[RMDB]
RNA sequence: GGGAACGACUCGAGUAGAGUCGAAAAGCAUGGCCGAUGAUCGUUAUUAUUUCACAAGUGAUAAAAUUACGUGGUAUUCGGCAUUAUACGCUAGCGUAUUACGUGGUGAGCGCAGCGCAAUUGCUGUUAAUUCAUUACAAGAAGCAAAAGUAUUGUACACAAGGCUUGGCUUCGGCCAAGCCUUGUGAAAAGAAACAACAACAACAAC
Reactivity to DMS in 0.01 (KOAc 150mM, MgCl2 10mM, bicine 150mM(pH8.5), 24C), signal-to-noise 1, nucleotides 027 to 156: g000c030a100u000g030g080c010c000g040a060u000g020a110u000c060g010u000u000a070u000u000a170u000u000u020c050a090c020a240a210g020u010g000a070u030a030a100a000a140u010u000a050c000g040u000g000g050u000a130u000u000c020g000g060c000a050u000u000a070u000a040c040g000c000u000a120g070c020g060u000a070u000u000a060c050g120u020g050g010u020g000a180g040c080g010c000a030g000c000g030c050a110a160u000u000g000c000u000g060u000u000a140a070u000u010c020a090u010u000a010c090a150a060g010a130a300g010c020a050a040a100a000g030u000a150u000u000g000u020a110
Reactivity to 2A3 in 0.01 (KOAc 150mM, MgCl2 10mM, bicine 150mM(pH8.5), 24C), signal-to-noise 2, nucleotides 027 to 156: g020c040a090u100g080g020c010c000g020a000u030g080a050u020c010g060u000u010a050u050u000a060u000u120u030c090a110c020a170a230g060u110g110a070u120a050a150a010a040u040u100a000c030g000u030g020g020u240a100u000u000c000g020g000c000a000u080u070a030u010a000c060g000c050u080a030g000c030g030u060a070u190u100a060c200g080u140g030g000u030g030a020g020c020g050c010a020g010c050g010c020a040a180u140u160g000c000u000g000u020u040a060a090u080u000c070a000u030u060a000c030a020a050g020a060a020g110c060a060a030a040a100g020u110a070u060u070g070u030a030
This 207-nucleotide RNA was probed chemically with DMS and 2A3. 2A3 adducts were read by reverse transcription with SuperScript II with manganese. For 2A3, 772 sequencing reads were counted. It was measured as part of the RMDB library OK3TST. For DMS, 1,565 sequencing reads were counted. Conditions: 150 mM KOAc, 10 mM MgCl2 and 150 mM bicine (pH 8.5), 24 C. Values cover nucleotides 27 to 156.